Chemical mapping of a 177-nucleotide RNA with DMS and 2A3. Values cover nucleotides 27 to 126. The reactions ran in a buffer of 150 mM KOAc, 10 mM MgCl2 and 150 mM bicine (pH 8.5), at 24 C. The 2A3 profile rests on 96,383 reads.
[RMDB]
RNA sequence: GGGAACGACUCGAGUAGAGUCGAAAAGAUAUGGAGGAAUGUGAGCUCAACAGCCGUGAGAUGUCGGAAACGACAUCACGGACAUGAGCCCAUUCCUCCUAAGUCAAAACGCCAUGUUCGCAUGGCGCAUGAUAUGAGUGUUCGCACUCAUAUCAUGAAAAGAAACAACAACAACAAC
Reactivity to DMS in 0.01 (KOAc 150mM, MgCl2 10mM, bicine 150mM(pH8.5), 24C), signal-to-noise 9, nucleotides 027 to 126: g000a020u000a300u010g000g000a010g010g010a030a000u000g010u010g010a190g040c000u000c000a070a090c300a200g010c000c000g000u000g010a070g010a090u010g010u000c000g010g000a060a060a160c000g010a020c010a050u000c000a010c000g000g000a030c090a290u010g000a010g010c000c000c000a010u000u000c000c000u000c000c000u000a000a050g000u000c020a100a060a080a220c020g000c000c000a000u000g000u010u010c250g030c020a010u000g000g000c010g020
Reactivity to 2A3 in 0.01 (KOAc 150mM, MgCl2 10mM, bicine 150mM(pH8.5), 24C), signal-to-noise 9, nucleotides 027 to 126: g020a010u050a020u120g000g000a000g010g050a000a010u020g180u140g090a150g050c010u010c030a170a190c090a220g040c010c010g010u020g040a240g020a090u170g000u000c010g000g030a050a040a050c010g000a000c000a030u020c000a000c000g010g010a010c050a280u300g000a000g000c000c000c000a000u000u000c000c000u000c000c000u000a000a000g000u000c000a020a010a030a060c020g000c000c000a010u010g060u060u100c300g000c150a010u000g000g000c000g010